The record gives the reactivity of an RNA of 177 nucleotides to 2A3 and DMS. For DMS the reverse transcriptase was MarathonRT. The 2A3 profile rests on 5,032 reads. The reactions ran in a buffer of 150 mM KOAc, 10 mM MgCl2 and 150 mM bicine (pH 8.5), at 24 C.
[RMDB]
RNA sequence: GGGAACGACUCGAGUAGAGUCGAAAACGUUUGUACAGGAUAGGUAGGAGCCUUGGAAGCCGGAGCGCUAGCUUCGGUGGAGGCGCUGGUGGGAUACUACCCUGACGGUAUUGACAUUCUAACCUCGCCCAAUGCACUAAUUCGUUAGUGCAUUGGGAAAAGAAACAACAACAACAAC
Reactivity to 2A3 in 0.01 (KOAc 150mM, MgCl2 10mM, bicine 150mM(pH8.5), 24C), signal-to-noise 3, nucleotides 027 to 126: c020g000u010u030u060g020u000a020c010a000g010g010a010u030a020g020g000u020a000g020g040a090g020c020c020u140u300g110g030a030a000g020c000c020g010g000a010g000c030g000c150u130a130g000c000u040u000c010g000g000u020g000g010a000g010g000c030g000c030u030g050g040u060g020g000g000a010u020a090c000u000a000c020c000c010u010g010a010c010g010g000u040a060u030u070g020a020c030a080u070u050c020u050a100a180c020c010u030c070g060
Reactivity to DMS in 0.01 (KOAc 150mM, MgCl2 10mM, bicine 150mM(pH8.5), 24C), signal-to-noise 4, nucleotides 027 to 126: c100g010u000u010u000g020u010a050c040a020g000g000a150u000a030g000g010u010a050g010g000a150g020c020c010u000u000g010g020a170a250g000c000c000g010g000a010g020c020g000c300u010a100g010c010u000u000c010g000g000u010g000g000a040g020g020c010g020c120u010g020g020u000g000g000g000a100u010a090c030u000a020c000c010c040u010g010a240c110g010g000u000a040u010u000g010a060c040a090u000u000c100u000a120a130c070c030u000c150g010